[RMDB]
Description
An RNA of 207 nucleotides, treated with 2A3 and DMS and read out base by base.
RNA sequence: GGGAACGACUCGAGUAGAGUCGAAAACAGCUGUUCCUGGCCUAGGGAGGAGCCAGAACCCCCAACCAAUAGUAUUGAGGAUGGUGAUGCGAGCCUUGGGUCCUCCCUAACUUGGCUACUGUGUUACAGAAGCGAUAUCCAAGGCAGUGUCAUCUGAGCGUAGCUCAGUAUUCGUACUGAGCUACGCAAAAGAAACAACAACAACAAC
Reactivity to 2A3 in 0.01 (KOAc 150mM, MgCl2 10mM, bicine 150mM(pH8.5), 24C), signal-to-noise 2, nucleotides 027 to 156: c030a020g090c140u120g020u080u120c050c000u010g000g000c000c030u040a030g000g010g000a010g030g000a000g010c000c000a020g050a020a100c020c040c050c020c030a050a060c060c010a090a080u060a150g130u140a110u150u130g060a020g060g080a100u110g000g000u000g040a010u000g000c010g040a020g000c010c000u000u000g010g010g000u010c000c030u000c000c000c000u000a020a010c020u050u110g170g000c020u040a060c000u020g000u020g230u280u180a010c000a000g010a000a010g000c020g000a010u000a000u120c000c000a000a000g000g000c000a000g000u000g000u000c000a010u000c000u000g040a020
Reactivity to DMS in 0.01 (KOAc 150mM, MgCl2 10mM, bicine 150mM(pH8.5), 24C), signal-to-noise 2, nucleotides 027 to 156: c050a080g030c080u010g020u000u000c050c010u010g000g010c040c030u000a050g000g000g000a060g030g030a270g000c000c040a050g030a080a080c010c000c000c010c030a040a140c040c040a150a130u010a160g040u000a300u000u000g000a110g000g000a180u000g020g030u010g000a080u010g000c000g010a120g040c000c010u020u000g010g030g010u010c030c000u000c000c000c010u000a000a060c020u000u010g000g000c020u010a100c020u000g000u000g020u010u030a190c030a100g020a120a040g030c000g010a200u000a100u000c000c010a040a030g020g010c020a300g000u000g000u000c010a120u000c030u010g010a280
As a SHAPE reagent, 2A3 marks flexible, mostly unpaired nucleotides at the ribose 2'-OH. For 2A3 the reverse transcriptase was SuperScript II with manganese. The reactions ran in a buffer of 150 mM KOAc, 10 mM MgCl2 and 150 mM bicine (pH 8.5), at 24 C.